[RMDB]
Background: The data come from the RNA Mapping Database (RMDB), library TTRDEL. Structure probing data (2A3 and DMS) for a 177-nucleotide construct.

RNA sequence: GGGAACGACUCGAGUAGAGUCGAAAAGAUAUGGAGGAUAUGGUGAGCUGUGAACUCGGAAACGAGGGAGCUCCCAUGAUCCUCCUAAGUCAAAACCUCUUAUAGAAGUUCGCUUCUAUAAGAGGAAGGAUAGAUAUGCGUUCGCGCAUAUCUAUCCAAAAGAAACAACAACAACAAC
Reactivity to 2A3 in 0.01 (KOAc 150mM, MgCl2 10mM, bicine 150mM(pH8.5), 24C), signal-to-noise 2, nucleotides 027 to 126: g040a020u090a030u200g010g010a010g000g010a000u000a000u010g030g000u300g100a020g000c000u070g100u030g300a060a030c010u030c020g000g000a070a120a050c010g010a010g010g000g010a020g020c000u000c000c000c000a020u060g020a000u000c000c010u000c000c000u010a000a000g000u000c010a000a030a020a080c000c000u010c010u000u030a000u010a010g010a030a010g030u040u180c230g080c150u010u000c000u000a000u000a000a000g010a010g000g000a000a000
Reactivity to DMS in 0.01 (KOAc 150mM, MgCl2 10mM, bicine 150mM(pH8.5), 24C), signal-to-noise 1, nucleotides 027 to 126: g010a050u000a300u000g000g000a020g000g010a000u010a020u000g000g020u000g060a010g030c010u010g000u010g020a150a250c000u000c000g020g000a160a070a150c020g000a020g010g000g000a050g020c000u000c000c000c000a000u000g000a000u000c000c000u000c000c000u000a010a040g000u000c050a140a120a170a160c000c000u000c000u000u000a010u000a000g000a000a000g010u010u000c260g000c000u000u000c000u000a020u000a000a000g020a000g000g010a010a040
The RNA was probed in 150 mM KOAc, 10 mM MgCl2 and 150 mM bicine (pH 8.5) at 24 C. For 2A3 the reverse transcriptase was SuperScript II with manganese. The DMS profile rests on 1,306 reads. In probing experiments dimethyl sulfate is read out at A N1 and C N3, which are open when not base-paired.